[RMDB]
RNA sequence: GGGAACGACUCGAGUAGAGUCGAAAACUGCCGCCGGGACGCAGUUAUCCUCGCAGGGUCGCACGGUCGCCUCGGGUCGGCCUCGUGUCGGCUCGACCUGCGAGGGGAGCGAGUGGCGAGCCCGACCAAAACUUUCUCGCCUUCGGGCGAGAAAGAAGUAUAGCACAAUGUUCGCAUUGUGCUAUACAAAAGAAACAACAACAACAAC
Reactivity to 2A3 in 0.01 (KOAc 150mM, MgCl2 10mM, bicine 150mM(pH8.5), 24C), signal-to-noise 3, nucleotides 027 to 156: c020u030g020c020c010g030c020c020g040g030g030a040c010g000c020a040g040u050u050a070u060c020c000u000c000g020c000a020g060g020g080u180c070g020c070a110c110g150g090u130c030g040c020c010u040c020g010g010g010u010c010g010g000c010c000u140c110g210u300g010u010c010g000g010c000u020c010g030a040c000c000u000g000c010g000a000g000g000g000g000a050g020c020g000a090g120u130g050g010c000g020a030g030c040c030c010g040a060c020c020a030a070a050a040c000u000u000u010c000u000c010g000c000c010u000u030c190g060g000g000c000g000a000g000a000a000a000g010a000a000